An RNA of 177 nucleotides, treated with DMS and 2A3 and read out base by base.
Reactivities are given for positions 27 through 126.
DMS adducts were read by reverse transcription with MarathonRT.
The reactions ran in a buffer of 150 mM KOAc, 10 mM MgCl2 and 150 mM bicine (pH 8.5), at 24 C.
High DMS reactivity at an A or C suggests that its Watson-Crick edge is free.
It was measured as part of the RMDB libraries RFM100 and RFMREP.
[RMDB]
RNA sequence: GGGAACGACUCGAGUAGAGUCGAAAAGAAAGAAAGAUCUCCUUUGGAUCUUUUUGCGGUCUGGGCUUGCUGUUCUCUCGACAGUAGUCAGGAAGCCCUUACCCCAAAAAGUAUCUACGGGAGGCAACAGUACACUUAUUUUCGAAUAAGUGUACUGAAAAGAAACAACAACAACAAC
Reactivity to DMS in 0.01 (KOAc 150mM, MgCl2 10mM, bicine 150mM(pH8.5), 24C), signal-to-noise 9, nucleotides 027 to 126: g010a100a080a100g010a100a110a110g010a110u010c000u000c010c020u000u010u010g000g000a010u000c000u000u000u000u000u010g020c300g010g000u000c030u010g010g000g010c000u000u010g000c010u000g000u020u010c020u000c060u000c300g020a120c290a060g010u020a010g000u000c000a010g000g000a020a020g000c000c000c000u000u000a010c010c000c040c010a000a010a010a020a010g000u030a010u000c010u000a020c110g000g000g000a010g000g000c110a080a140
Reactivity to 2A3 in 0.01 (KOAc 150mM, MgCl2 10mM, bicine 150mM(pH8.5), 24C), signal-to-noise 9, nucleotides 027 to 126: g070a020a070a000g100a030a100a010g060a200u020c000u010c000c000u010u020u050g010g000a000u000c000u000u000u000u000u010g010c020g000g000u010c010u010g010g000g000c010u020u070g080c000u040g090u260u050c030u000c010u030c070g160a130c070a140g150u230a020g020u100c000a000g040g030a000a000g000c000c000c000u000u010a010c000c000c000c000a000a000a000a000a000g090u120a040u000c000u010a000c010g000g000g000a000g000g000c000a030a030